[RMDB]
RNA sequence: GGGAACGACUCGAGUAGAGUCGAAAAGAGCAUGUCUUCGGACAUGCUCAAACGAGAAACGGCAAAUAAGCCGAUCCCAGGCGAACGUACGCCAUACUCGAAAAAGUAUAGUCUUCGGACUAUACAAGUUUAAACGGUUGUUCGCAACCGUUUAAACAAAAGAAACAACAACAACAAC
Reactivity to DMS in 0.01 (KOAc 150mM, MgCl2 10mM, bicine 150mM(pH8.5), 24C), signal-to-noise 1, nucleotides 027 to 126: g000a020g020c000a000u000g000u000c000u000u020c220g050g070a070c000a000u000g000c020u000c010a000a060a110c140g020a040g000a050a080a130c070g020g020c000a090a070a070u000a010a060g010c000c000g000a060u000c000c000c000a290g000g010c030g000a130a070c190g040u000a060c120g020c020c000a050u000a100c010u000c010g010a150a040a030a160a090g020u000a000u000a010g000u000c000u000u010c200g030g000a020c000u000a000u000a000c000a040a080
Reactivity to 2A3 in 0.01 (KOAc 150mM, MgCl2 10mM, bicine 150mM(pH8.5), 24C), signal-to-noise 1, nucleotides 027 to 126: g010a010g050c000a000u000g000u010c000u060u060c240g080g020a010c000a010u010g000c000u000c000a000a000a000c000g000a010g010a040a100a030c030g000g020c030a030a060a290u160a210a040g010c020c010g000a030u000c000c000c010a010g000g000c010g050a140a080c140g130u240a060c130g010c010c000a020u050a070c010u020c000g050a140a090a010a000a000g000u020a000u000a000g000u020c010u000u080c250g070g000a010c030u000a000u000a020c000a010a050